[RMDB]
RNA sequence: GGGAACGACUCGAGUAGAGUCGAAAAGAUAUGGAUGGAGCUUAUAUUAGAGGUACGUCGGAAACGACGUACUACCCACCUAAUAAAGCGAUGAAAUCCUAAGUCAAAAGCAUACUUCGGUAUGCAACUCUGCCUUAUACUUCGGUAUAAGGCAGAGAAAAGAAACAACAACAACAAC
Reactivity to 2A3 in 0.01 (KOAc 150mM, MgCl2 10mM, bicine 150mM(pH8.5), 24C), signal-to-noise 2, nucleotides 027 to 126: g050a040u150a030u160g000g000a010u010g020g050a010g000c000u070u080a220u030a000u300u010a020g020a000g000g000u000a000c010g000u000c000g000g030a050a050a010c000g000a000c000g000u000a000c000u010a000c000c000c010a050c000c000u010a000a010u000a010a010a010g020c030g210a300u060g030a040a000a000u010c010c000u030a190a060g080u020c050a000a070a130a020g000c000a000u000a020c030u000u060c230g050g000u000a000u000g000c010a000a020
Reactivity to DMS in 0.01 (KOAc 150mM, MgCl2 10mM, bicine 150mM(pH8.5), 24C), signal-to-noise 2, nucleotides 027 to 126: g010a110u000a300u000g000g000a010u000g000g000a070g020c000u000u000a120u000a000u000u000a030g000a140g000g010u000a000c000g000u000c010g030g000a110a070a230c000g000a010c000g030u000a000c000u000a040c040c030c080a300c040c000u000a010a000u020a020a010a060g010c000g010a120u010g000a080a060a010u000c000c000u000a060a100g000u000c020a090a060a090a150g010c000a000u000a010c000u000u010c240g030g000u000a000u000g010c000a050a050